RNA sequence: GGGAACGACUCGAGUAGAGUCGAAAAGAUAUGGACUGUUCAUCGAUCUUAUCCCUCUCGGAAACGAGAGGGAGUAAGGGAGAAUGGUCCUAAGUCAAAGACUCAUGUUCUUCGGAACAUGAGUCAACAAUCCGAUUGGGUUCGCCCAAUCGGAUUGAAAAGAAACAACAACAACAAC
Reactivity to DMS in 0.01 (KOAc 150mM, MgCl2 10mM, bicine 150mM(pH8.5), 24C), signal-to-noise 2, nucleotides 027 to 126: g000a020u020a300u000g000g010a010c000u000g010u000u000c000a210u010c120g000a090u020c020u000u000a080u000c000c000c000u000c000u000c010g000g000a130a070a170c010g000a010g000a030g010g000g010a000g000u000a010a000g030g020g000a030g000a000a000u000g000g020u000c000c010u010a010a020g010u000c020a140a140a100g020a020c000u000c000a000u000g010u010u000c000u010u020c260g030g010a000a000c000a000u020g000a000g010u000c010a030a080
Reactivity to 2A3 in 0.01 (KOAc 150mM, MgCl2 10mM, bicine 150mM(pH8.5), 24C), signal-to-noise 2, nucleotides 027 to 126: g020a020u090a060u150g000g000a000c010u010g030u050u010c060a240u230c270g140a100u010c040u060u070a020u000c010c010c000u050c000u020c000g060g010a100a060a080c010g010a010g000a000g010g000g000a000g010u030a010a020g040g040g000a030g000a020a010u020g020g010u000c010c000u000a060a000g040u030c040a130a050a120g000a010c000u010c000a000u010g020u030u000c000u050u090c300g060g000a000a000c000a000u000g000a000g000u000c000a010a000